This 207-nucleotide RNA was probed chemically with DMS and 2A3. Values cover nucleotides 27 to 156.
RNA sequence: GGGAACGACUCGAGUAGAGUCGAAAAGCCACCUCGCUUCCAUAGAAAGGGGACGGGGCAGAUCGCAAGUGCUACAACCGAGCGGUGGUAUCUGUCAAACUAAGCAGCCACUGCACAUCAAUUGACUAAACGAUGCCGAUCUUCGGAUCGGCAUCAAGUAGACUUAUUUCUUCGGAAAUAAGUCUACAAAAGAAACAACAACAACAAC
Reactivity to DMS in 0.01 (KOAc 150mM, MgCl2 10mM, bicine 150mM(pH8.5), 24C), signal-to-noise 1, nucleotides 027 to 156: g030c030c020a070c000c000u010c000g000c000u000u020c000c010a080u010a170g020a100a140a100g010g000g010g000a030c020g010g000g000g010c000a050g030a050u020c070g010c060a130a110g050u000g000c030u030a180c000a030a140c070c060g020a150g020c010g010g010u000g020g010u000a050u000c040u010g000u020c020a080a030a110c180u010a030a150g010c000a210g000c010c000a060c030u000g000c060a090c080a110u000c100a090a130u010u000g010a150c150u010a060a140a140c090g020a050u000g020c000c000g000a000u000c000u000u000c300g060g000a010u000c020g010g000c010a000u000c000a000a060
Reactivity to 2A3 in 0.01 (KOAc 150mM, MgCl2 10mM, bicine 150mM(pH8.5), 24C), signal-to-noise 2, nucleotides 027 to 156: g040c020c010a030c010c000u010c010g030c030u060u000c010c010a090u090a230g240a150a130a070g040g020g010g010a030c000g010g000g000g000c030a000g000a030u040c010g000c040a040a000g010u040g050c010u120a100c080a160a050c080c070g110a030g010c000g010g010u010g000g000u030a050u030c000u010g080u070c090a070a110a160c100u090a110a000g000c010a000g000c000c000a000c000u010g070c020a020c020a050u230c070a070a260u150u180g080a100c030u150a030a070a070c130g020a000u010g000c000c000g000a000u020c010u020u090c120g080g000a000u000c000g000g000c000a000u010c000a000a000